Overview: The record gives the reactivity of an RNA of 177 nucleotides to 2A3 and DMS. For 2A3, 1,439 sequencing reads were counted. The DMS profile rests on 1,665 reads. For DMS the reverse transcriptase was MarathonRT. Reactivities are given for positions 27 through 126. The data come from the RNA Mapping Database (RMDB), library OK2TST.
RNA sequence: GGGAACGACUCGAGUAGAGUCGAAAACGGCGGUAGCUUCCUGCUGGCGGCGUUAAUCUUCAUCGCCUGCCUGGUAACGGCAGUUGGCCUGACCUGUGCUUGUGCAGAAUUCUUUGCCCAGUACGUAGCCGAAACGUAAUUUCGAUUACGUUUCGGCAAAAGAAACAACAACAACAAC
Reactivity to 2A3 in 0.01 (KOAc 150mM, MgCl2 10mM, bicine 150mM(pH8.5), 24C), signal-to-noise 2, nucleotides 027 to 126: c030g020g000c010g090g090u040a000g040c010u060u040c040c020u030g000c000u010g000g040c000g000g040c020g000u040u070a080a080u090c100u250u150c060a070u050c010g010c000c010u080g030c000c030u070g030g060u120a160a050c070g000g000c000a010g020u060u080g040g010c000c000u000g030a090c000c000u000g010u030g000c000u100u060g080u160g060c000a000g050a090a170u270u110c080u080u020u050g040c010c010c010a020g030u020a020c030g020u010a030
Reactivity to DMS in 0.01 (KOAc 150mM, MgCl2 10mM, bicine 150mM(pH8.5), 24C), signal-to-noise 2, nucleotides 027 to 126: c150g030g000c040g030g010u000a030g030c030u000u010c080c020u000g010c010u000g000g000c030g000g020c030g020u000u000a060a090u000c130u010u010c100a100u000c030g000c040c010u000g060c020c010u010g030g000u000a080a100c130g030g010c020a010g010u000u020g000g030c030c010u010g000a110c070c010u000g040u000g010c040u000u000g010u000g010c000a060g020a080a190u020u010c070u000u000u000g000c020c040c040a080g010u000a030c070g000u010a110